[RMDB]
RNA sequence: GGGAACGACUCGAGUAGAGUCGAAAAAGAUCCGUACGCGGAUCAAGGCACUUUUAGCGGGGGGAGAGGAGGUUAUCUGAAGGGAGGCUGGCUUGAAUGUGAGUCGUUGUGUUUGUGAAACCCAGAACAUGAAUAAACCUUUCGAGGUUUAUUCAUGAAAAGAAACAACAACAACAAC
Reactivity to 2A3 in 0.01 (KOAc 150mM, MgCl2 10mM, bicine 150mM(pH8.5), 24C), signal-to-noise 6, nucleotides 027 to 126: a000g000a000u000c010c000g000u020a010c280g000c010g080g010a000u000c010a000a010g040g000c040a030c100u040u090u070u200a050g010c080g010g020g000g010g010g010a090g000a040g070g020a030g040g010u100u100a120u120c080u100g070a040a030g000g020g030a020g030g030c060u040g030g000c020u050u060g040a140a050u140g090u060g060a020g010u010c020g000u010u020g030u010g030u030u050u060g050u010g030a070a040a020c030c010c000a010g020a030a010
Reactivity to DMS in 0.01 (KOAc 150mM, MgCl2 10mM, bicine 150mM(pH8.5), 24C), signal-to-noise 5, nucleotides 027 to 126: a110g000a010u000c000c000g020u010a100c210g040c010g010g000a020u000c000a070a060g010g030c080a070c080u000u020u010u010a090g020c060g000g000g010g000g000g020a090g010a120g010g010a090g000g010u010u010a070u020c110u040g020a120a090g010g000g000a090g000g010c080u010g000g000c020u010u020g010a090a080u020g000u010g000a040g000u000c020g020u000u010g000u000g010u020u010u010g000u000g010a030a070a090c020c010c020a110g010a060a180
Record summary:
This 177-nucleotide RNA was probed chemically with 2A3 and DMS. The reactions ran in a buffer of 150 mM KOAc, 10 mM MgCl2 and 150 mM bicine (pH 8.5), at 24 C. Source: RMDB libraries RFM100 and RFMREP, as collected in RNAgym. DMS (dimethyl sulfate) methylates the pairing face of unpaired adenines and cytosines.